[RMDB]
RNA sequence: GGGAACGACUCGAGUAGAGUCGAAAAGAGUAGCAUAAGCUCUCCUUUGACAUCUUCACCAACCUCUCAUCGUUCCCUUCUCUGUAAUAACGUCGUUUUGCAAAACUGCAAUGGUCCUGAGCCGAUAUCCUAUAAUGUUGUUCGCAACAUUAUAGGAAAAAGAAACAACAACAACAAC
Reactivity to DMS in 0.01 (KOAc 150mM, MgCl2 10mM, bicine 150mM(pH8.5), 24C), signal-to-noise 6, nucleotides 027 to 126: g010a020g000u020a020g030c030a160u020a150a130g010c010u000c010u000c030c030u000u000u000g010a050c050a130u000c040u000u010c110a120c220c120a080a090c140c020u000c010u000c110a150u000c020g010u000u000c000c000c010u000u000c020u000c010u010g010u000a060a060u020a060a090c110g010u000c040g010u000u000u000u000g000c030a040a060a080a090c140u000g010c030a050a030u000g010g010u000c030c030u000g010a090g020c040c040g000a100u020a090
Reactivity to 2A3 in 0.01 (KOAc 150mM, MgCl2 10mM, bicine 150mM(pH8.5), 24C), signal-to-noise 3, nucleotides 027 to 126: g010a000g060u240a000g010c070a120u130a300a030g010c010u000c010u000c000c010u020u010u040g020a010c030a260u030c050u120u060c050a090c090c020a040a080c020c020u060c010u000c010a010u000c000g010u010u020c000c010c000u010u020c010u000c010u000g020u040a040a070u060a180a030c040g060u030c010g000u020u040u060u060g040c020a020a030a140a180c060u050g020c010a050a090u040g020g010u030c010c030u060g030a030g000c000c010g070a050u050a050